[RMDB]
RNA sequence: GGGAACGACUCGAGUAGAGUCGAAAAGAUAUGGACCCAUGAGGACAUGACUGAUCGGAAACGAUCACUCAACAGCCUUGUGGGUCCUAAGUCAAAAUCGUCAUUUUGGUUCGCCAAAAUGACGAAAGCCAACUAAAUACUUCGGUAUUUAGUUGGCAAAAGAAACAACAACAACAAC
Reactivity to DMS in 0.01 (KOAc 150mM, MgCl2 10mM, bicine 150mM(pH8.5), 24C), signal-to-noise 3, nucleotides 027 to 126: g000a010u000a070u000g000g010a000c000c000c000a000u000g000a010g020g000a180c100a070u010g000a030c160u010g000a020u000c010g010g000a030a020a040c010g010a000u010c000a000c080u000c000a000a240c300a140g000c010c000u000u000g040u000g000g010g010u000c000c000u010a000a050g000u000c000a180a090a080a090u000c000g020u000c000a000u000u000u000u000g020g000u000u020c300g010c000c000a000a010a000a010u000g000a000c000g000a000a020a080
Reactivity to 2A3 in 0.01 (KOAc 150mM, MgCl2 10mM, bicine 150mM(pH8.5), 24C), signal-to-noise 2, nucleotides 027 to 126: g000a000u010a000u050g000g010a010c000c010c010a000u030g020a000g070g040a150c080a220u000g000a010c000u000g010a000u000c020g000g000a000a000a000c000g000a010u010c010a010c000u010c000a010a050c040a080g080c010c000u000u000g010u000g010g010g010u000c000c000u000a000a000g000u000c000a010a010a000a190u040c000g000u000c000a000u020u000u000u000g050g010u030u140c230g160c080c010a000a010a010a010u000g000a000c010g000a000a010a000